[RMDB]
Conditions: 150 mM KOAc, 10 mM MgCl2 and 150 mM bicine (pH 8.5), 24 C. Structure probing data (2A3 and DMS) for a 177-nucleotide construct. For DMS, 1,218 sequencing reads were counted. Reactivities are given for positions 27 through 126.
RNA sequence: GGGAACGACUCGAGUAGAGUCGAAAAGCUGUCAGCUUCGGCUGACAGCAAACGCUCAUCUCAUGGAGCGCAAGACGAAUAGCUACAUAUUCGUCAUGAGAAAAAGCUGCGCGUUCGCGCGCAGCAAUCUUCAUUGGUAGUUCGCUACCAAUGAAGAAAAAGAAACAACAACAACAAC
Reactivity to 2A3 in 0.01 (KOAc 150mM, MgCl2 10mM, bicine 150mM(pH8.5), 24C), signal-to-noise 2, nucleotides 027 to 126: g000c020u000g020u010c000a000g000c000u040u070c170g080g010c010u000g000a000c010a000g000c000a000a000a000c000g000c010u010c010a030u020c010u000c020a010u030g010g020a020g000c080g090c220a060a040g120a030c010g000a000a000u010a030g090c190u300a120c140a180u080a000u010u020c000g000u000c000a000u010g010a000g030a020a070a020a010a020g020c000u000g000c010g000c000g010u050u060c210g010c000g000c000g000c030a000g010c000a000a010
Reactivity to DMS in 0.01 (KOAc 150mM, MgCl2 10mM, bicine 150mM(pH8.5), 24C), signal-to-noise 2, nucleotides 027 to 126: g030c000u000g000u000c000a000g010c000u000u000c200g020g030c000u000g000a000c000a000g000c000a010a040a180c030g030c000u000c000a130u000c020u010c030a010u000g010g000a040g010c010g010c160a030a040g010a070c000g010a020a010u000a000g010c190u030a090c170a150u000a000u000u000c000g000u000c000a070u000g000a050g000a100a150a100a120a090g000c000u000g030c000g030c000g020u000u000c300g030c000g040c000g000c000a000g040c010a010a010

Description: DMS adducts were read by reverse transcription with MarathonRT.